[RMDB]
RNA sequence: GGGAACGACUCGAGUAGAGUCGAAAAGAUAUGGAUCCACGAGAGCGAUGAAAUACGUCAGUCGGAAACGACUGAGCGUAUGGAGCUCGAGUGGAUCCUAAGUCAAAACAACCAGUUCGCUGGUUGACGUUCGAGAUAAGUUCGCUUAUCUCGAACGAAAAGAAACAACAACAACAAC
Reactivity to DMS in 0.01 (KOAc 150mM, MgCl2 10mM, bicine 150mM(pH8.5), 24C), signal-to-noise 3, nucleotides 027 to 126: g010a050u030a300u000g000g000a030u000c000c010a000c000g000a300g010a020g000c010g010a150u000g030a190a110a000u010a000c000g010u000c000a000g000u000c000g060g000a110a070a240c000g010a030c000u000g010a050g040c000g030u010a000u000g000g020a100g000c000u000c000g010a250g010u000g000g000a000u000c000c000u000a020a050g000u000c070a090a070a180a240c010a010a010c020c000a030g000u000u010c280g030c000u010g000g000u000u010g020a160
Reactivity to 2A3 in 0.01 (KOAc 150mM, MgCl2 10mM, bicine 150mM(pH8.5), 24C), signal-to-noise 2, nucleotides 027 to 126: g050a010u070a080u140g000g010a010u000c010c000a020c020g050a040g010a000g040c010g300a300u070g060a080a060a030u010a000c020g000u020c040a000g010u010c000g000g050a060a030a070c000g000a010c000u000g010a010g010c000g000u010a010u020g010g030a030g000c000u000c000g000a000g010u020g020g000a000u020c010c000u010a010a000g000u000c000a040a030a050a120c010a020a010c000c010a000g030u090u110c300g030c150u030g040g010u000u000g030a060